Chemical mapping of a 207-nucleotide RNA with 2A3. 2A3 is a SHAPE reagent: it acylates the 2'-hydroxyl of flexible nucleotides of all four kinds. The 2A3 profile rests on 408 reads. Values cover nucleotides 27 to 156.
[RMDB]
RNA sequence: GGGAACGACUCGAGUAGAGUCGAAAAACAUAUUACUAUAUGAUUCAGAUGGUGUCUUACUGGUUCGUACCAAGGGACAUAAUGGUUUCUUGUUUCCAACCAAAGAACAAGUGGCGAGCCUGAAUAAAAAACUGACUGCCGUUCGCGGCAGUCAGAACCUUAAUCAGGGGUUCGCCCCUGAUUAAGGAAAAGAAACAACAACAACAAC
Reactivity to 2A3 in 0.01 (KOAc 150mM, MgCl2 10mM, bicine 150mM(pH8.5), 24C), signal-to-noise 1, nucleotides 027 to 156: a000c090a060u250a060u100u170a200c050u240a160u070a080u130g010a060u100u160c050a100g060a220u090g020g160u040g010u000c010u000u070a070c060u050g020g000u050u070c060g050u110a050c030c030a020a040g050g000g020a000c010a050u260a100a090u090g030g020u000u000u010c000u000u000g020u030u050u000c050c020a120a120c000c010a000a190a000g020a040a000c010a000a000g030u020g090g050c050g020a040g050c000c060u060g020a050a040u090a080a120a000a000a030a040c000u010g000a000c000u000g020c040c020g050u050u070c200g000c020g090g000c000a000g000u000c000a000g000a000a000